The data come from the RNA Mapping Database (RMDB), library OK2TST. An RNA of 177 nucleotides, treated with 2A3 and DMS and read out base by base.
RNA sequence: GGGAACGACUCGAGUAGAGUCGAAAACGCAUGGCCGUCCGCGCUGCGGUAUUCGACGACGAGCGGCGCCUGCAACGCAUCGCUCCACAGAACGCGAUUGGUGCCCUGCGCGCGCGGCGCGCCGACAUCAUACGAGUGCAUUCGUGCACUCGUAUGAAAAAGAAACAACAACAACAAC
Reactivity to 2A3 in 0.01 (KOAc 150mM, MgCl2 10mM, bicine 150mM(pH8.5), 24C), signal-to-noise 2, nucleotides 027 to 126: c030g060c080a140u140g180g000c000c020g030u100c010c000g000c010g000c020u080g040c030g010g030u060a070u110u250c120g080a110c040g030a020c000g000a030g010c030g000g010c000g030c000c010u170g020c100a070a050c050g010c000a050u050c010g020c020u090c040c040a140c030a170g140a200a040c100g050c020g120a180u010u110g040g000u020g020c000c010c040u050g000c000g010c000g000c010g000c000g020g030c000g020c010g000c000c000g020a020c000a110
Reactivity to DMS in 0.01 (KOAc 150mM, MgCl2 10mM, bicine 150mM(pH8.5), 24C), signal-to-noise 3, nucleotides 027 to 126: c100g000c080a100u000g020g020c010c000g030u000c240c010g010c040g020c030u010g000c120g040g000u010a070u010u010c050g000a110c060g000a110c110g010a030g000c030g020g020c050g000c010c080u000g020c140a100a100c120g000c010a030u000c030g000c010u000c010c110a100c190a090g000a060a130c160g000c010g010a130u000u020g000g060u000g010c010c010c030u000g000c010g050c020g000c230g030c020g000g000c010g000c100g010c010c040g010a110c170a140

Notes
Conditions: 150 mM KOAc, 10 mM MgCl2 and 150 mM bicine (pH 8.5), 24 C.